[RMDB]
RNA sequence: GGGAACGACUCGAGUAGAGUCGAAAACUAAAAAGAAGCUAGCAUGCCUGCAACUAUCUCAAGGCAGAAGAGGGAAGUCCAUGUGGUAGAAAGUGCCAUUCUAAGAGAAAAGGGCUUGUGAUAGGUGUGUAGGAAACUUUUUCGAAAGUUUCCUACAAAAAGAAACAACAACAACAAC
Reactivity to 2A3 in 0.01 (KOAc 150mM, MgCl2 10mM, bicine 150mM(pH8.5), 24C), signal-to-noise 1, nucleotides 027 to 126: c000u100a000a000a000a050a130g130a130a020g020c030u090a010g050c010a050u030g020c010c000u010g020c020a040a170c060u050a070u020c020u000c060a010a010g010g000c000a000g040a060a000g080a020g060g000g010a040a020g050u010c020c010a060u080g010u020g070g050u060a050g130a180a170a060g250u100g040c010c000a000u020u030c020u080a110a070g070a020g050a090a070a000a030g040g000g040c000u060u070g040u020g010a060u030a070g100g020u060g020
Reactivity to DMS in 0.01 (KOAc 150mM, MgCl2 10mM, bicine 150mM(pH8.5), 24C), signal-to-noise 2, nucleotides 027 to 126: c020u010a060a080a090a140a060g000a130a070g000c070u010a090g010c050a080u000g000c030c020u010g000c050a130a100c030u000a030u000c010u000c040a080a050g020g000c030a000g010a070a040g010a110g010g000g000a120a070g020u000c040c020a090u000g020u010g000g000u000a050g010a080a050a100g010u000g010c030c020a080u000u010c100u010a080a090g010a130g010a070a050a090a100g030g000g000c030u010u010g010u000g000a080u000a040g010g010u000g010